Chemical mapping of a 177-nucleotide RNA with DMS.
Conditions: 150 mM KOAc, 10 mM MgCl2 and 150 mM bicine (pH 8.5), 24 C.

[RMDB]
RNA sequence: GGGAACGACUCGAGUAGAGUCGAAAACCGAAUAGGGAUGACACGGGGCGGGCGAAAGCCUGUUCACAGCCGGUUUCCGGGCCCGUCAUCCGGGUGGGUUGCGAGAGGCGGCAUGCAAAUGCCGUCCUGCAUCAUUGGCGUUCGCGCCAAUGAUGCAAAAAGAAACAACAACAACAAC
Reactivity to DMS in 0.01 (KOAc 150mM, MgCl2 10mM, bicine 150mM(pH8.5), 24C), signal-to-noise 1, nucleotides 027 to 126: c010c010g030a090a070u000a150g030g070g000a060u000g000a000c060a150c120g000g020g000g000c000g000g030g010c000g000a040a130a240g000c000c060u010g000u000u020c010a060c200a300g000c000c000g000g030u000u000u020c000c010g010g000g000c040c000c120g050u000c010a040u010c010c000g050g000g080u020g010g000g000u020u000g010c060g000a040g000a270g000g010c010g020g030c000a010u000g020c230a050a070a000u000g020c000c000g000u000c000c030